Record summary
The data come from the RNA Mapping Database (RMDB), library OK3TST. Structure probing data (DMS and 2A3) for a 207-nucleotide construct. For 2A3 the reverse transcriptase was SuperScript II with manganese. The 2A3 profile rests on 4,400 reads. The reactions ran in a buffer of 150 mM KOAc, 10 mM MgCl2 and 150 mM bicine (pH 8.5), at 24 C. DMS adducts were read by reverse transcription with MarathonRT. The DMS profile rests on 5,440 reads.
RNA sequence: GGGAACGACUCGAGUAGAGUCGAAAACUGUUGUGGGCUUGGCUUCCAUGACACCUGAGCUCUGCCCACAGAUGGCAUAUGUCAUGGCAACCUGCAGGCAUGGUGAUCUCCAGCCUUGUGGUCAGAGGCGUUCUCCUGUCCCCACCGAGGUGGCCAGGCUUGAAUGAAAUUUCGAUUUCAUUCAAGCAAAAGAAACAACAACAACAAC
Reactivity to DMS in 0.01 (KOAc 150mM, MgCl2 10mM, bicine 150mM(pH8.5), 24C), signal-to-noise 2, nucleotides 027 to 156: c040u000g020u010u010g010u000g010g030g020c030u000u010g000g060c030u010u000c020c000a050u000g020a130c040a030c050c030u000g000a120g030c040u000c060u000g010c030c010c040a170c040a070g000a060u000g000g000c100a150u000a080u010g030u010c070a070u010g020g020c040a050a050c060c020u000g000c090a110g020g010c030a070u000g040g010u000g000a100u010c080u000c030c030a110g000c030c010u000u000g020u000g040g040u020c050a160g000a030g000g010c050g000u000u000c040u000c000c040u000g010u000c010c010c010c010a140c070c090g010a110g020g000u000g000g010c010c020a060g040
Reactivity to 2A3 in 0.01 (KOAc 150mM, MgCl2 10mM, bicine 150mM(pH8.5), 24C), signal-to-noise 5, nucleotides 027 to 156: c040u030g040u090u010g000u050g000g000g010c040u040u090g070g000c010u110u020c030c010a090u090g040a040c040a050c050c070u040g030a020g010c010u000c020u030g000c000c010c000a020c000a000g020a020u070g010g020c060a090u090a060u300g030u030c040a040u060g020g030c050a080a090c060c080u080g010c040a030g020g000c100a210u050g000g040u100g110a220u080c080u000c100c000a000g000c000c000u010u090g040u030g030g000u040c050a030g000a010g010g010c000g020u050u010c040u010c000c010u020g030u060c020c010c000c000a060c030c150g060a130g030g060u080g010g040c020c010a020g010